Notes:
Structure probing data (DMS and 2A3) for a 207-nucleotide construct. It was measured as part of the RMDB library OK3TST. The 2A3 profile rests on 882 reads. Reactivities are rounded to 0.1 and cut off at 0 and 3. The reactions ran in a buffer of 150 mM KOAc, 10 mM MgCl2 and 150 mM bicine (pH 8.5), at 24 C.
RNA sequence: GGGAACGACUCGAGUAGAGUCGAAAACAGUGCAAAUCGAUCCUCAGACUGGUCAAUAUCAAGUCAAAUUGAACAAUGCUCGCAUUAAAUCGAUGCGCGUUAACUACGAUGCCGGCAACGGCAGUUCUAAGAUCAGUAAAGUGUUUGUAGCGGAACGAGUGGCUUCAAUAUUCGUAUUGAAGCCACUAAAAGAAACAACAACAACAAC
Reactivity to DMS in 0.01 (KOAc 150mM, MgCl2 10mM, bicine 150mM(pH8.5), 24C), signal-to-noise 2, nucleotides 027 to 156: c060a100g030u020g000c060a030a060a050u000c210g000a080u000c020c010u000c040a170g010a050c010u000g020g030u000c050a050a260u020a240u010c040a030a100g010u000c130a020a070a190u010u000g000a030a150c120a110a050u010g000c060u000c010g000c000a040u000u000a020a060a160u000c140g020a040u000g040c000g010c070g030u010u000a060a070c080u000a140c040g010a100u000g000c050c000g070g000c240a090a170c020g060g130c000a050g010u000u000c050u000a150a130g010a050u000c000a050g000u000a040a110a060g010u010g000u000u000u000g020u010a090g040c040g010g010a120a050c090g000
Reactivity to 2A3 in 0.01 (KOAc 150mM, MgCl2 10mM, bicine 150mM(pH8.5), 24C), signal-to-noise 1, nucleotides 027 to 156: c060a010g080u080g100c040a010a030a070u020c000g090a030u000c000c030u120c020a020g020a070c000u000g000g020u000c050a040a010u030a030u120c030a070a000g130u070c000a030a080a130u100u110g030a040a000c030a030a090u110g000c020u020c020g000c010a010u000u100a060a140a190u200c130g020a020u020g000c000g000c000g030u040u060a080a030c030u030a050c130g050a040u080g000c010c000g000g000c070a060a050c020g000g000c000a010g000u020u000c040u030a090a000g010a000u010c010a030g020u030a020a060a000g000u050g020u100u070u080g030u100a040g040c070g030g000a000a040c030g000